[RMDB]
RNA sequence: GGGAACGACUCGAGUAGAGUCGAAAAGAAGAGCCGGCCUAACAAAGGUGGGAGGCACCCAACCCUUCGCAAGAGCCGAGUGGGAAGGCUAAGCGAAACCAAGACAAAAUGGUUAUAAAUAAUGCAACAUACUUAGGGUCUUCGGACCCUAAGUAUGAAAAGAAACAACAACAACAAC
Reactivity to 2A3 in 0.01 (KOAc 150mM, MgCl2 10mM, bicine 150mM(pH8.5), 24C), signal-to-noise 2, nucleotides 027 to 126: g070a030a030g040a030g030c030c030g070g070c000c030u090a190a090c050a130a170a060g090g000u050g040g030g010a080g020g010c000a050c010c010c020a000a120c000c000c030u000u040c010g000c060a190a040g010a010g230c010c030g040a030g020u190g020g020g100a010a120g020g010c020u010a020a020g030c000g010a030a000a000c000c010a050a020g070a070c050a060a100a020a130u040g000g000u100u070a110u070a140a180a050u190a060a050u070g030c030a020a090
Reactivity to DMS in 0.01 (KOAc 150mM, MgCl2 10mM, bicine 150mM(pH8.5), 24C), signal-to-noise 2, nucleotides 027 to 126: g020a110a060g020a070g000c010c010g040g020c010c000u020a100a100c120a170a080a070g000g000u010g030g000g020a170g010g020c060a100c020c000c010a030a160c110c040c010u030u000c010g030c010a050a140g000a070g020c030c010g020a120g060u000g020g000g020a110a180g000g010c020u000a030a260g000c030g000a070a050a040c010c000a000a040g000a150c090a010a050a090a050u000g000g010u000u000a090u020a050a030a160u000a080a040u000g010c050a050a220